[RMDB]
RNA sequence: GGGAACGACUCGAGUAGAGUCGAAAAAGGCCGGCGCGAUACUCCCUAUAACAUCCUUUUCAGUAGAUUUCAUUAUCGUGCCGGUUUUCUCACAUGCAAAGCAAUCCCGCCAAUCUAAUUGAUGGCGCGUAUUAUUGUAGUUCGCUACAAUAAUACGAAAAGAAACAACAACAACAAC
Reactivity to 2A3 in 0.01 (KOAc 150mM, MgCl2 10mM, bicine 150mM(pH8.5), 24C), signal-to-noise 5, nucleotides 027 to 126: a000g010g000c000c010g000g000c000g000c010g010a000u020a040c020u060c040c000c010u050a070u030a130a050c030a100u080c020c020u070u090u100u150c080a070g050u120a030g100a130u030u110u150c040a030u010u130a000u000c000g000u000g010c000c000g010g000u000u000u000u000c000u000c000a040c000a020u110g040c010a070a050a090g020c020a020a080u060c020c010c000g000c020c000a090a120u000c020u120a150a230u170u170g000a010u010g010g030c010g000
Reactivity to DMS in 0.01 (KOAc 150mM, MgCl2 10mM, bicine 150mM(pH8.5), 24C), signal-to-noise 5, nucleotides 027 to 126: a090g000g010c000c000g020g010c020g030c010g000a020u000a040c190u000c040c040c010u010a130u010a090a110c140a070u010c070c030u000u000u000u000c110a150g010u010a080g010a090u000u000u010c100a100u010u000a010u000c000g010u010g010c000c000g000g000u000u000u000u000c010u000c010a170c190a100u000g000c100a060a070a100g020c080a060a080u010c030c070c010g030c010c010a010a090u000c020u000a100a140u020u000g000a040u000g000g010c030g020